[RMDB]
RNA sequence: GGGAACGACUCGAGUAGAGUCGAAAAUCCUAAGUCUCUCGUGAUGUAGAGGUGGGUGGGAGCUGUUCGGAAACGAACAGCAUCGAUCACCCACUCCCCACCUACAUCCGAGAGAUAUGGAAAAAGGUAUUUAUCUUGUUCGCAAGAUAAAUACCAACGUCCAAUAUAAGUUCGCUUAUAUUGGACGAAAAGAAACAACAACAACAAC
Reactivity to DMS in 0.01 (KOAc 150mM, MgCl2 10mM, bicine 150mM(pH8.5), 24C), signal-to-noise 2, nucleotides 027 to 156: u000c010c000u010a050a250g020u000c000u000c010u000c010g000u010g090a040u020g000u000a010g010a270g030g040u000g000g010g050u000g010g010g010a190g020c000u010g020u010u000c020g030g020a150a110a250c010g000a020a030c020a000g020c010a040u000c160g010a220u010c130a160c020c010c010a010c020u000c180c070c040c050a300c130c030u000a020c000a010u000c020c010g010a000g010a010g000a000u010a060u010g000g000a020a070a090a100a080g000g020u000a010u000u000u000a000u000c000u010u010g010u000u000c300g030c040a030a010g000a000u000a000a020a000u010a000c010c000a000a030
Reactivity to 2A3 in 0.01 (KOAc 150mM, MgCl2 10mM, bicine 150mM(pH8.5), 24C), signal-to-noise 4, nucleotides 027 to 156: u020c000c000u030a080a060g030u000c000u000c000u010c010g150u230g060a000u000g000u000a000g010a020g040g000u030g000g000g000u000g000g010g020a060g010c000u010g000u000u010c010g020g040a110a090a080c010g000a000a000c000a000g010c000a020u100c060g060a060u100c040a070c010c000c000a000c010u010c020c000c000c000a170c020c010u000a000c000a010u000c000c000g010a010g010a000g000a000u000a000u020g010g090a050a090a020a070a070g010g000u000a000u000u000u000a000u000c000u000u030g030u070u110c280g020c150a000a000g000a000u000a000a000a000u000a000c000c000a000a020

This 207-nucleotide RNA was probed chemically with DMS and 2A3. It was measured as part of the RMDB library RNAMAK. The reactions ran in a buffer of 150 mM KOAc, 10 mM MgCl2 and 150 mM bicine (pH 8.5), at 24 C. Reactivities are given for positions 27 through 156.